Conditions: 150 mM KOAc, 10 mM MgCl2 and 150 mM bicine (pH 8.5), 24 C. This 177-nucleotide RNA was probed chemically with 2A3 and DMS. For DMS the reverse transcriptase was MarathonRT. For DMS, 40,729 sequencing reads were counted.
[RMDB]
RNA sequence: GGGAACGACUCGAGUAGAGUCGAAAAGAUAUGGACUAGUCCACAGGGAGCUGGGCUUUCGGAAACGAAAGCAUAGCGAGGAUCUGUGGGUGGGGUCCUAAGUCAAAGCAUUAGUUCGCUAAUGCAACACUUAAUCUAAGUUCGCUUAGAUUAAGUGAAAAGAAACAACAACAACAAC
Reactivity to 2A3 in 0.01 (KOAc 150mM, MgCl2 10mM, bicine 150mM(pH8.5), 24C), signal-to-noise 9, nucleotides 027 to 126: g020a020u060a040u140g000g000a000c020u050a060g070u010c010c000a000c000a000g010g000g010a020g000c020u050g010g050g010c000u010u010u000c000g000g010a040a050a040c010g000a000a000a010g000c010a020u010a000g000c010g080a300g010g010a010u000c010u020g010u030g010g010g020u040g020g250g070g000u000c000c000u010a060a010g020u010c060a130a080a050g000c000a000u000u020a010g040u050u100c300g000c170u010a010a000u010g000c010a030a020
Reactivity to DMS in 0.01 (KOAc 150mM, MgCl2 10mM, bicine 150mM(pH8.5), 24C), signal-to-noise 9, nucleotides 027 to 126: g000a030u000a170u010g000g000a020c010u000a300g000u000c000c000a000c010a020g000g000g000a020g020c000u000g010g000g000c000u000u000u000c000g010g000a040a040a100c000g010a010a000a010g010c000a030u000a010g010c000g000a060g010g000a010u010c000u000g000u000g010g010g010u000g010g020g020g010u000c000c000u000a010a080g000u000c030a090a110a120g000c000a010u000u000a010g000u010u010c280g010c000u000a010a000u000g010c000a160a210